[RMDB]
RNA sequence: GGGAACGACUCGAGUAGAGUCGAAAAUAGGUCGUGUUCGCACGACCUAAGAUAAAAUGCAUUAAAUGCCAGUAACCCGAAACACAAGGGAGUGCACCUGGCCUACGAUGUCGUUCGCGACAUCGAAAGAGUAGAGUGUGUUCGCACACUCUACUCUAAAAGAAACAACAACAACAAC
Reactivity to DMS in 0.01 (KOAc 150mM, MgCl2 10mM, bicine 150mM(pH8.5), 24C), signal-to-noise 2, nucleotides 027 to 126: u000a030g000g020u010c030g100u000g010u000u030c300g010c000a000c000g000a020c000c000u020a000a000g000a150u000a040a030a090a040u000g000c040a080u010u000a040a050a030u000g000c010c000a030g000u000a130a110c000c000c010g020a130a050a190c100a030c170a060a140g000g000g030a290g010u000g000c020a050c300c000u000g000g000c010c240u000a060c000g010a010u000g010u010c010g040u000u000c210g000c000g030a010c010a000u000c000g000a070a060
Reactivity to 2A3 in 0.01 (KOAc 150mM, MgCl2 10mM, bicine 150mM(pH8.5), 24C), signal-to-noise 2, nucleotides 027 to 126: u040a010g040g010u010c000g030u000g090u020u060c230g000c060a000c000g010a000c000c020u000a010a000g000a000u120a020a080a030a040u140g000c000a010u030u300a260a110a020u110g020c000c020a000g030u090a210a130c020c010c020g060a110a190a010c100a000c020a100a030g060g010g000a030g030u030g010c010a020c030c000u000g010g030c000c000u040a070c020g000a000u000g000u000c010g010u060u100c150g000c000g040a000c010a000u020c000g000a100a120
The record gives the reactivity of an RNA of 177 nucleotides to DMS and 2A3.
2A3 is a SHAPE reagent: it acylates the 2'-hydroxyl of flexible nucleotides of all four kinds.
The data come from the RNA Mapping Database (RMDB), library M2PK50.